Structure probing data (DMS and 2A3) for a 207-nucleotide construct. The 2A3 profile rests on 5,704 reads.

RNA sequence: GGGAACGACUCGAGUAGAGUCGAAAAGCGGCAGGAAUGGCGUGAGGCUGGCUUCACAGAGCAGCGAUCACUGCCCGCUUCCAACGGUGGGAGGAUAACAGGCCGCUGCACCAUUAGCCCAACUUAGGGCCCAGAGCCUCACUAUAGCAGACCACCACGAUUUAACUAAGUUCGCUUAGUUAAAUCGAAAAGAAACAACAACAACAAC
Reactivity to DMS in 0.01 (KOAc 150mM, MgCl2 10mM, bicine 150mM(pH8.5), 24C), signal-to-noise 3, nucleotides 027 to 156: g000c040g010g020c030a060g000g010a090a090u000g010g000c080g030u000g000a050g040g010c010u000g030g020c100u010u040c120a220c200a140g010a140g000c000a060g000c010g020a080u010c040a210c020u010g000c000c000c020g000c040u000u000c020c090a110a070c130g020g020u000g010g070g020a090g010g000a160u000a060a120c100a120g010g000c000c020g020c000u000g040c010a090c020c030a090u000u000a070g000c030c010c000a050a090c220u000u020a150g000g000g020c010c020c040a080g000a110g000c010c000u000c020a040c030u000a100u000a080g040c050a080g000a090c000c010a040c000c010a250
Reactivity to 2A3 in 0.01 (KOAc 150mM, MgCl2 10mM, bicine 150mM(pH8.5), 24C), signal-to-noise 4, nucleotides 027 to 156: g010c020g010g000c030a040g010g070a140a080u120g060g020c030g010u010g010a020g010g000c010u030g020g040c050u130u180c140a130c050a130g060a020g040c010a010g000c000g040a070u060c040a020c110u050g020c030c010c000g000c010u110u050c030c030a060a020c080g000g020u020g010g020g000a080g040g020a060u060a210a080c050a080g020g060c020c010g000c010u010g000c030a100c100c000a050u040u190a010g000c010c000c000a060a160c170u160u270a160g000g000g010c000c010c000a080g000a020g030c000c000u020c000a020c020u100a070u090a100g100c070a020g040a090c000c000a000c000c000a020